RNA sequence: GGGAACGACUCGAGUAGAGUCGAAAACAGAAGCGAGCUUGCAGAGAACACGGCUCUGUUGCAAGUGAUGCAUGUGGCCGUCACCGCAACACUUCUUGCGGACUUGGUUGAUAGGGUGAAGGAAAUCACAUUCAAGGUGUUUCGACACCUUGAAUGUAAAAGAAACAACAACAACAAC
Reactivity to 2A3 in 0.01 (KOAc 150mM, MgCl2 10mM, bicine 150mM(pH8.5), 24C), signal-to-noise 3, nucleotides 027 to 126: c020a040g060a160a020g010c040g060a010g000c050u010u050g000c040a010g040a000g020a170a020c080a040c170g100g000c040u030c000u080g140u120u040g030c020a010a090g040u060g030a090u160g030c030a030u070g030u120g160g010c050c010g020u020c040a010c020c010g000c000a030a050c050a030c110u190u270c030u050u100g000c020g030g010a070c050u080u080g040g050u030u120g040a080u120a100g090g020g000u050g030a040a050g050g060a030a090a070u150c040
Reactivity to DMS in 0.01 (KOAc 150mM, MgCl2 10mM, bicine 150mM(pH8.5), 24C), signal-to-noise 5, nucleotides 027 to 126: c080a090g000a140a100g020c040g000a220g010c000u000u010g000c030a060g000a070g000a050a090c100a090c180g010g000c030u000c040u000g000u000u000g010c010a050a090g010u010g010a200u000g010c040a090u010g000u000g000g000c040c030g000u000c100a120c020c040g000c010a020a030c100a100c150u010u000c040u000u010g010c070g010g000a100c070u000u000g000g000u000u000g010a080u010a090g000g010g020u000g010a060a060g000g000a050a050a090u000c140